Structure probing data (2A3 and DMS) for a 207-nucleotide construct.
The 2A3 profile rests on 2,051 reads.
Reactivities are given for positions 27 through 156.
DMS (dimethyl sulfate) methylates the pairing face of unpaired adenines and cytosines.

RNA sequence: GGGAACGACUCGAGUAGAGUCGAAAAGAACACGUCUCGGGACGACGCUAAACUCGCCCUGGUCGGGAUGGGUUUAACGACCCCUCGGGUUUCCUAGUUCCUAAAGCUAGGUGGUGGAGUCAUAUAAAAAACUUCUACACGUUCGCGUGUAGAAGAACAAGAAUUCAUGGUUCGCCAUGAAUUCUUGAAAAGAAACAACAACAACAAC
Reactivity to 2A3 in 0.01 (KOAc 150mM, MgCl2 10mM, bicine 150mM(pH8.5), 24C), signal-to-noise 2, nucleotides 027 to 156: g070a070a030c040a000c060g010u000c000u050c050g020g040g020a070c300g020a020c040g040c190u030a000a030a030c010u010c020g000c020c000c020u070g070g030u060c040g020g030g040a090u090g040g000g000u000u040u110a080a030c040g020a010c000c000c000c010u030c020g050g000g000u030u090u060c000c000u020a030g000u040u110c040c050u130a130a040a010g020c020u020a000g000g000u010g000g060u050g040g040a060g050u080c060a040u140a000u240a150a040a000a020a030a090c000u000u000c010u010a000c000a010c010g020u040u060c220g000c000g080u000g000u000a000g010a000a000g000a000a000
Reactivity to DMS in 0.01 (KOAc 150mM, MgCl2 10mM, bicine 150mM(pH8.5), 24C), signal-to-noise 2, nucleotides 027 to 156: g010a160a120c060a160c020g020u000c000u030c030g010g000g040a060c070g010a070c010g040c060u010a040a080a070c150u000c010g010c000c000c000u010g000g050u000c080g010g030g000a010u010g020g000g000u000u000u000a070a140c080g000a110c000c000c000c030u000c030g000g010g020u000u010u000c030c040u000a090g010u010u000c110c070u010a140a110a140g020c040u000a030g020g030u000g020g010u010g020g010a150g000u000c050a050u000a110u060a000a020a080a090a080a050c000u000u000c000u000a000c000a020c020g000u000u010c300g010c030g010u000g010u000a010g010a010a000g010a070a130